Background:
This 207-nucleotide RNA was probed chemically with DMS and 2A3. The data come from the RNA Mapping Database (RMDB), library OK3TST. The RNA was probed in 150 mM KOAc, 10 mM MgCl2 and 150 mM bicine (pH 8.5) at 24 C. For 2A3, 3,198 sequencing reads were counted. High 2A3 reactivity points to a flexible backbone, as in loops and unpaired stretches.
[RMDB]
RNA sequence: GGGAACGACUCGAGUAGAGUCGAAAACAACGCCUGCAUUAACGGUGACAGUUAAUGGUAAGGAAAUCUGUCUACAGUAAAAUGUUUCCGGGAGAUCUGCUAACGAGGUACAAACGUUCGCAUAGUCAAUCUUGAGUAUGGCGUUAUCAAGGCCUGGCUGAUAGUUGUACUUCGGUACAACUAUCAGAAAAGAAACAACAACAACAAC
Reactivity to DMS in 0.01 (KOAc 150mM, MgCl2 10mM, bicine 150mM(pH8.5), 24C), signal-to-noise 3, nucleotides 027 to 156: c060a060a070c040g020c010c020u000g000c030a040u000u000a080a070c030g000g020u010g040a130c120a120g020u000u000a040a060u030g030g030u010a120a140g020g000a070a050a050u000c040u020g000u000c030u000a120c030a090g010u000a060a060a070a060u000g010u000u000u000c020c020g030g000g010a130g000a080u000c030u000g020c030u000a060a080c040g010a080g010g000u010a200c130a080a140a140c090g000u000u000c100g030c030a140u000a060g030u000c060a040a090u000c070u000u000g010a120g000u000a050u000g020g020c020g010u000u000a080u000c050a050a070g010g010c050c010u000g010g020
Reactivity to 2A3 in 0.01 (KOAc 150mM, MgCl2 10mM, bicine 150mM(pH8.5), 24C), signal-to-noise 5, nucleotides 027 to 156: c020a000a030c040g030c000c020u050g010c030a060u060u030a070a020c040g080g030u100g090a030c050a020g000u020u060a070a030u090g060g110u100a060a080g080g040a130a100a070u040c030u060g070u030c040u110a110c060a080g060u140a020a090a090a190u090g020u050u070u010c020c000g000g050g010a070g010a040u030c020u080g010c000u020a010a020c020g030a030g090g110u200a050c090a040a150a000c030g010u020u030c030g000c040a040u060a090g050u050c040a040a130u030c030u040u070g020a020g020u060a050u100g010g000c010g020u030u000a030u050c040a040a000g070g030c010c040u060g030g000